Conditions: 150 mM KOAc, 10 mM MgCl2 and 150 mM bicine (pH 8.5), 24 C. Structure probing data (DMS and 2A3) for a 207-nucleotide construct. 2A3 adducts were read by reverse transcription with SuperScript II with manganese. The DMS profile rests on 7,017 reads. The 2A3 profile rests on 8,344 reads. High DMS reactivity at an A or C suggests that its Watson-Crick edge is free.
[RMDB]
RNA sequence: GGGAACGACUCGAGUAGAGUCGAAAAGAAUUGGUAUGUAAGCUACUUCUUCCAGUAGCUGCGUCAUAACAUCAAGGUUAUGCAUACUGAGCCGAAGCUCAGCUGCGGUCCUCCAAGGAAGACCAAAUACAGCUCAGCCCGUUCGCGGGCUGAGCAACAUUACUAAGAACUUCGGUUCUUAGUAAUGAAAAGAAACAACAACAACAAC
Reactivity to DMS in 0.01 (KOAc 150mM, MgCl2 10mM, bicine 150mM(pH8.5), 24C), signal-to-noise 3, nucleotides 027 to 156: g010a140a130u000u000g010g010u000a020u000g010u000a300a300g000c000u000a010c000u010u000c060u000u010c040c060a300g040u000a000g020c010u000g000c040g010u000c000a030u010a000a010c010a300u000c240a190a160g010g000u000u000a020u000g000c010a030u010a010c000u000g010a080g000c000c010g020a050a060g020c040u000c080a120g020c010u000g020c010g000g000u000c020c030u000c040c050a090a170g000g000a040a050g040a230c070c030a040a060a100u000a090c100a130g020c010u000c000a020g010c000c000c000g050u000u010c290g050c040g000g000g030c000u000g010a000g010c000a000a040
Reactivity to 2A3 in 0.01 (KOAc 150mM, MgCl2 10mM, bicine 150mM(pH8.5), 24C), signal-to-noise 3, nucleotides 027 to 156: g110a010a080u030u030g000g000u000a010u000g000u000a010a010g000c000u000a000c010u070u120c000u010u000c010c000a000g000u000a000g010c000u000g000c000g000u010c000a010u010a000a010c010a070u280c190a150a060g300g000u000u000a000u010g000c010a000u010a010c000u010g010a000g000c000c000g020a020a010g000c030u080c300a030g000c010u040g010c010g000g000u020c010c020u060c060c040a070a060g000g000a000a000g000a010c020c060a010a100a050u220a130c080a020g000c000u000c000a000g010c000c010c000g030u060u060c160g010c020g080g000g020c000u000g000a000g000c000a000a000